Overview:
The record gives the reactivity of an RNA of 170 nucleotides to DMS. For DMS the reverse transcriptase was MarathonRT.
[RMDB]
RNA sequence: GGGAACGACUCGAGUAGAGUCGAAAACGGAGAAGGCGGAAAAAUCACCUCCAGAGGACCCCUUCAGCGAACAGAAGAGCCCCGCACGGGAUAGGAGUAAGACCAUAGCGAUGGGGGGAGAUGCUAGUACCCAGGAACUUCGGUUCCUGGAAAAGAAACAACAACAACAAC
Reactivity to DMS in 0.01 (KOAc 150mM, MgCl2 10mM, bicine 150mM(pH8.5), 24C), signal-to-noise 5, nucleotides 027 to 129: c030g050g000a000g010a000a010g020g020c160g090g040a040a020a080a120a070u050c080a100c020c010u030c060c090a130g040a060g030g010a120c300c040c030c000u010u030c120a110g030c080g020a110a050c080a070g030a070a030g020a000g000c100c060c010c070g070c140a120c130g050g020g000a120u050a000g050g000a090g050u050a000a000g040a120c000c000a000u050a130g040c120g030a060u000g040g010g010g020g050g010a040g000a060u020g020c110u050a090g020u060a080c120